[RMDB]
RNA sequence: GGGAACGACUCGAGUAGAGUCGAAAAGGGGUGAGCUGUUCAGUACUACGGAAGAAAUAAAGUGCUUUAAUAAGGUGCAGAUGAAAUGUAAAGUGGGCGAAAAUUCUUACAUAAAUGUCAAAGAAGCUCUCAUGACCUUAUUCGUAAGGUCAUGAGAAAAAGAAACAACAACAACAAC
Reactivity to DMS in 0.01 (KOAc 150mM, MgCl2 10mM, bicine 150mM(pH8.5), 24C), signal-to-noise 2, nucleotides 027 to 126: g020g000g000g020u000g020a050g010c050u000g010u000u010c090a050g010u000a040c080u010a090c120g030g030a070a080g000a030a040a060u010a050a130a130g020u000g000c040u000u020u000a050a100u010a140a110g000g020u010g000c050a050g030a120u000g020a070a080a080u000g000u000a040a030a110g000u020g010g000g030c040g000a050a060a040a140u000u000c050u000u010a050c050a110u000a040a060a040u000g010u000c110a090a050a100g000a070a090g010c130
Reactivity to 2A3 in 0.01 (KOAc 150mM, MgCl2 10mM, bicine 150mM(pH8.5), 24C), signal-to-noise 1, nucleotides 027 to 126: g000g000g100g000u050g050a030g000c040u000g150u050u030c000a000g020u000a030c080u040a050c120g060g060a120a050g080a080a150a000u230a120a150a000g010u030g000c000u020u090u090a130a100u120a200a090g000g010u030g000c000a000g010a130u050g100a120a120a000u070g020u050a020a030a090g040u040g010g020g000c050g040a050a010a020a000u090u030c010u030u060a030c010a040u220a180a250a100u130g020u030c080a010a000a110g020a190a020g090c010
This 177-nucleotide RNA was probed chemically with DMS and 2A3. Values cover nucleotides 27 to 126. The 2A3 profile rests on 685 reads. It was measured as part of the RMDB library OK2TST. DMS adducts were read by reverse transcription with MarathonRT.